[RMDB]
RNA sequence: GGGAACGACUCGAGUAGAGUCGAAAAGCUACGUUCUGAACAACGUGCUUGCUGCCACCGUCGCAUACGGUGUCAAGCACGUGGCUGUUGGCAACACCAUCGUCAACGGCUAUAGGGUGGGCAGCACCAACAGGCGAGUGUUCGCACUCGCCUGUUGAAAAGAAACAACAACAACAAC
Reactivity to DMS in 0.01 (KOAc 150mM, MgCl2 10mM, bicine 150mM(pH8.5), 24C), signal-to-noise 3, nucleotides 027 to 126: g030c010u050a080c080g000u000u000c000u010g010a210a060c260a190a050c000g010u010g010c000u010u000g010c300u000g010c140c000a030c000c020g000u000c210g030c210a110u020a050c010g000g010u000g020u010c010a020a010g030c000a010c010g010u000g010g030c000u000g000u020u000g000g020c050a070a090c110a120c190c130a170u000c130g020u000c000a010a020c020g000g000c020u000a130u030a140g000g000g010u000g020g000g000c060a070g000c100a080c070
Reactivity to 2A3 in 0.01 (KOAc 150mM, MgCl2 10mM, bicine 150mM(pH8.5), 24C), signal-to-noise 2, nucleotides 027 to 126: g050c010u080a080c050g010u050u060c010u060g020a150a020c040a020a010c070g000u000g000c010u000u000g000c080u100g030c040c000a040c010c000g060u060c100g050c250a120u120a300c000g030g020u030g040u080c010a010a010g000c010a000c000g000u000g030g010c000u000g000u010u000g000g020c030a050a030c070a130c110c030a140u180c120g040u000c000a000a000c000g000g000c020u010a080u080a030g000g030g020u060g020g030g000c050a010g020c020a050c060